[RMDB]
Structure probing data (2A3) for a 177-nucleotide construct. The reactions ran in a buffer of 150 mM KOAc, 10 mM MgCl2 and 150 mM bicine (pH 8.5), at 24 C.
RNA sequence: GGGAACGACUCGAGUAGAGUCGAAAAGAAAGAAAGAAAGAAAUGCAGCCUGGUUCAAGUAAUCCAGGAUAGGCUGGCGUCUCAGACCCCGCGGCCUGUCCUUGCUUACUUGGACCAGGAGGUAGAAAGCGAGUGACUAGUUCGCUAGUCACUCGCUAAAAGAAACAACAACAACAAC
Reactivity to 2A3 in 0.01 (KOAc 150mM, MgCl2 10mM, bicine 150mM(pH8.5), 24C), signal-to-noise 1, nucleotides 027 to 126: g100a010a010a000g060a020a100a050g090a100a000a000g130a000a130a000u110g030c000a000g040c000c000u000g020g010u000u000c010a000a000g000u000a000a000u010c000c000a010g000g000a000u000a000g000g000c030u110g280g000c000g050u150c130u030c060a100g080a200c000c000c110c000g070c000g000g030c000c010u040g010u040c040c000u000u000g000c000u000u000a000c000u000u000g000g000a030c000c000a030g000g000a000g000g000u050a000g100a070a140